[RMDB]
RNA sequence: GGGAACGACUCGAGUAGAGUCGAAAAGCCGUCUGGCCUACGUUGGUGUAACCCGCGCGAUGCAGAAACUGACGCUGACCUACGCGGAAACUCGCCGUCUGUAUGGCAAAGAAGUUUACCAUCGCCACGUGGAUUACCUAUUCGUAGGUAAUCCACGAAAAGAAACAACAACAACAAC
Reactivity to 2A3 in 0.01 (KOAc 150mM, MgCl2 10mM, bicine 150mM(pH8.5), 24C), signal-to-noise 4, nucleotides 027 to 126: g030c020c020g080u070c110u130g040g000c010c030u060a040c070g050u040u070g040g010u040g010u040a020a090c000c010c000g020c040g000c010g040a030u090g020c030a010g170a100a060a040c040u070g060a040c060g040c100u030g070a220c000c010u020a020c030g000c010g000g050a060a140a120c050u060c080g050c020c010g010u020c000u020g060u050a100u260g030g000c030a040a060a010g030a020a010g000u010u040u030a070c010c010a020u040c020g010c040c050a070
Reactivity to DMS in 0.01 (KOAc 150mM, MgCl2 10mM, bicine 150mM(pH8.5), 24C), signal-to-noise 5, nucleotides 027 to 126: g020c030c020g000u020c110u010g020g000c030c030u010a030c090g010u000u000g030g020u000g000u000a090a110c100c000c030g020c250g020c030g000a050u000g010c110a120g010a070a060a050c080u010g000a140c220g010c110u010g000a120c040c020u000a050c040g030c030g000g010a050a060a100c190u000c130g020c010c010g000u000c090u020g030u000a000u000g000g010c000a030a020a080g000a180a060g010u000u000u000a110c210c030a030u020c030g000c030c180a180

Source information: This 177-nucleotide RNA was probed chemically with 2A3 and DMS. The data come from the RNA Mapping Database (RMDB), library OK2TST. For DMS the reverse transcriptase was MarathonRT.